[RMDB]
RNA sequence: GGGAACGACUCGAGUAGAGUCGAAAACAGUCGCGAAGCGUAAAACCGUCAUGUGCGGUGACGAGAUUAAUCGCGGCACUCGGCAGACGACCAUGACGUUUAAAAACAUCGCUGGAGGCAGCAAAAACGGUGAUGGAUUAUUCGUAAUCCAUCACCGAAAAGAAACAACAACAACAAC
Reactivity to 2A3 in 0.01 (KOAc 150mM, MgCl2 10mM, bicine 150mM(pH8.5), 24C), signal-to-noise 1, nucleotides 027 to 126: c020a020g010u030c000g000c010g100a070a000g040c030g030u060a000a030a050a190c030c050g000u000c000a110u110g100u120g060c010g000g030u020g000a010c060g020a010g010a070u130u200a100a090u090c040g000c000g090g000c000a020c010u010c010g040g000c020a010g050a300c010g030a070c010c010a010u020g040a030c020g000u020u050u170a070a100a020a030a000c050a070u060c040g000c010u000g090g000a040g080g000c020a040g040c000a020a020a040a010a020
Reactivity to DMS in 0.01 (KOAc 150mM, MgCl2 10mM, bicine 150mM(pH8.5), 24C), signal-to-noise 2, nucleotides 027 to 126: c140a120g020u000c030g000c060g030a080a080g020c080g000u010a090a070a090a020c070c020g000u000c050a070u010g040u010g060c010g010g060u010g000a010c010g000a090g000a150u000u020a130a130u000c050g000c000g030g000c100a050c030u000c010g010g000c020a030g000a070c060g000a070c050c020a020u000g010a030c070g010u010u010u000a030a060a060a110a120c090a080u000c030g010c060u010g010g000a150g000g010c110a110g000c110a070a110a090a110a160
This 177-nucleotide RNA was probed chemically with 2A3 and DMS. The reactions ran in a buffer of 150 mM KOAc, 10 mM MgCl2 and 150 mM bicine (pH 8.5), at 24 C. For 2A3 the reverse transcriptase was SuperScript II with manganese. For DMS, 1,297 sequencing reads were counted. For 2A3, 1,592 sequencing reads were counted.